This 177-nucleotide RNA was probed chemically with DMS and 2A3. For DMS, 830 sequencing reads were counted. Conditions: 150 mM KOAc, 10 mM MgCl2 and 150 mM bicine (pH 8.5), 24 C. It was measured as part of the RMDB library OK1LIB.
[RMDB]
RNA sequence: GGGAACGACUCGAGUAGAGUCGAAAAAGGGGUUAUGGCCAUUGACGAUAUAGCUCAAGUCGAAGGUUUAGACAUGAUAGUCGAAGGUGCCGCAGAUUUAUCGCAGUCACUUGGCAUACCAUGGCAAAGCGUAGCUUGACUUCGGUCAAGCUACGCUAAAAGAAACAACAACAACAAC
Reactivity to DMS in 0.01 (KOAc 150mM, MgCl2 10mM, bicine 150mM(pH8.5), 24C), signal-to-noise 1, nucleotides 027 to 126: a110g000g020g000g000u000u000a000u000g060g000c020c000a000u030u000g130a060c050g090a250u000a100u000a000g060c000u010c100a040a110g060u040c000g000a210a250g000g030u000u070u000a110g000a200c120a010u050g000a040u020a050g000u000c000g000a000a090g000g030u000g010c000c000g000c040a300g000a040u000u010u000a110u000c040g040c120a010g000u000c000a060c180u000u000g000g000c000a290u000a110c000c000a140u040g000g000c300a050a060
Reactivity to 2A3 in 0.01 (KOAc 150mM, MgCl2 10mM, bicine 150mM(pH8.5), 24C), signal-to-noise 2, nucleotides 027 to 126: a000g170g000g010g000u000u000a060u060g160g040c010c000a000u000u060g000a000c040g190a120u000a000u110a300g000c060u000c120a000a140g020u020c040g100a000a000g000g000u020u020u220a040g000a000c000a000u270g040a050u250a000g000u000c010g130a150a000g300g280u230g000c000c000g020c110a070g000a000u000u000u240a300u280c100g000c080a020g000u000c000a000c000u000u000g050g000c000a000u000a000c000c000a180u160g170g000c180a290a000